[RMDB]
Annotation: The record gives the reactivity of an RNA of 177 nucleotides to DMS and 2A3. DMS adducts were read by reverse transcription with MarathonRT. Conditions: 150 mM KOAc, 10 mM MgCl2 and 150 mM bicine (pH 8.5), 24 C. The DMS profile rests on 1,231 reads.
RNA sequence: GGGAACGACUCGAGUAGAGUCGAAAACCAGUGAUGCGCUGGUAUCAGAUGCGGCGGCGUGAGUGGAUGCCUCCGAUGCUGAUGACGAGGCGGCUGUUGCGCUGGCCGCUGCUGUACUUGCUGACGUGUACAUAAGUCACUUCGGUGACUUAUGUACAAAAGAAACAACAACAACAAC
Reactivity to DMS in 0.01 (KOAc 150mM, MgCl2 10mM, bicine 150mM(pH8.5), 24C), signal-to-noise 1, nucleotides 027 to 126: c010c010a150g010u000g010a100u020g000c090g000c050u010g000g010u000a030u040c010a010g000a190u000g040c000g000g000c020g000g010c000g000u000g020a070g000u000g030g030a110u010g000c000c010u010c000c010g000a160u010g010c220u010g020a110u000g000a300c300g000a030g000g010c000g000g000c010u000g030u000u010g010c030g010c010u000g030g040c000c000g000c000u000g020c000u000g010u000a040c060u000u000g000c050u010g000a100c110g010u000
Reactivity to 2A3 in 0.01 (KOAc 150mM, MgCl2 10mM, bicine 150mM(pH8.5), 24C), signal-to-noise 2, nucleotides 027 to 126: c000c000a000g140u060g180a160u140g060c050g000c060u070g010g000u050a070u260c030a000g000a070u020g000c010g000g000c010g010g000c000g000u000g090a060g050u250g000g040a050u030g000c000c000u020c000c010g000a030u100g100c110u250g020a270u080g010a010c020g010a000g000g000c020g010g000c000u040g050u110u040g000c010g000c020u040g300g040c040c000g000c010u010g000c010u010g010u000a000c010u050u070g000c070u040g030a100c000g130u090